[RMDB]
RNA sequence: GGGAACGACUCGAGUAGAGUCGAAAAUUGGUUGCACAGAGGACCGAAGGAAUUCUGCAUCAAAGUGCUAUGCCCUUACAUGCCCAAAGUGAUUGAGAAGAUGGAAACACUCCAAAGGCGAUAUGGACAGAGCAAAAUACUUCGGUAUUUUGCUCUGAAAAGAAACAACAACAACAAC
Reactivity to 2A3 in 0.01 (KOAc 150mM, MgCl2 10mM, bicine 150mM(pH8.5), 24C), signal-to-noise 2, nucleotides 027 to 126: u050u070g000g010u010u130g050c050a040c010a060g100a030g030g030a020c000c040g070a090a060g070g060a060a080u090u010c030u080g000c000a020u000c050a050a090a040g090u060g050c000u040a060u200g090c040c000c020u050u030a110c110a090u080g010c000c010c000a000a130a030g140u100g070a190u120u040g050a090g030a140a100g070a200u130g030g040a030a070a040c040a040c020u070c000c000a070a050a020g060g040c060g070a040u010a050u150g030g010a000
Reactivity to DMS in 0.01 (KOAc 150mM, MgCl2 10mM, bicine 150mM(pH8.5), 24C), signal-to-noise 4, nucleotides 027 to 126: u030u010g010g010u010u000g000c080a090c100a080g010a220g010g010a130c040c110g000a080a100g020g030a080a150u030u020c010u000g000c070a060u010c060a040a140a110g010u000g000c030u040a080u040g000c030c020c040u010u000a060c130a060u030g000c020c000c000a050a040a050g000u020g000a090u000u010g000a080g000a020a080g000a060u000g000g010a060a050a090c100a090c070u000c010c020a020a090a070g020g030c110g000a030u020a070u010g000g010a300

Structure probing data (2A3 and DMS) for a 177-nucleotide construct. 2A3 adducts were read by reverse transcription with SuperScript II with manganese. For DMS, 5,441 sequencing reads were counted. It was measured as part of the RMDB library OK1LIB.